RNA sequence: GGGAACGACUCGAGUAGAGUCGAAAAGUGGGUGGAGUGGGCAUCUGUCCCCUGCCCCAGGUAGUGCCCACCUCAGGGUCAGACCACUAGGGCUGAAGUCCUCCUUCAUCCUCAGCCCCAGGGAAGAAAAUUUAAUAAUGUUCGCAUUAUUAAAUUUAAAAGAAACAACAACAACAAC
Reactivity to 2A3 in 0.01 (KOAc 150mM, MgCl2 10mM, bicine 150mM(pH8.5), 24C), signal-to-noise 2, nucleotides 027 to 126: g040u040g020g010g010u050g010g020a090g030u110g000g000g000c010a080u060c130u140g240u250c010c000c000c010u020g030c020c000c010c000a010g020g000u060a030g060u040g090c020c010c020a030c000c020u040c090a080g000g000g040u060c030a010g020a170c020c040a070c200u130a040g000g000g000c000u010g020a060a020g040u050c000c020u030c020c000u050u050c040a050u060c010c000u000c010a040g040c030c000c000c010a020g000g020g040a040a030g090a040
Reactivity to DMS in 0.01 (KOAc 150mM, MgCl2 10mM, bicine 150mM(pH8.5), 24C), signal-to-noise 7, nucleotides 027 to 126: g020u010g000g010g040u010g010g000a040g030u010g020g010g010c020a090u010c090u010g010u010c030c010c040c070u010g010c040c010c010c070a050g000g000u000a060g010u000g010c030c010c030a090c070c060u000c130a080g010g000g010u010c080a080g000a130c070c050a120c140u010a100g000g000g010c020u000g010a040a050g010u000c040c040u010c240c020u000u000c050a060u000c030c020u010c020a090g000c040c000c000c060a060g000g010g010a180a130g000a070
This 177-nucleotide RNA was probed chemically with 2A3 and DMS. The data come from the RNA Mapping Database (RMDB), library OK2TRN. For 2A3, 3,427 sequencing reads were counted. High 2A3 reactivity points to a flexible backbone, as in loops and unpaired stretches.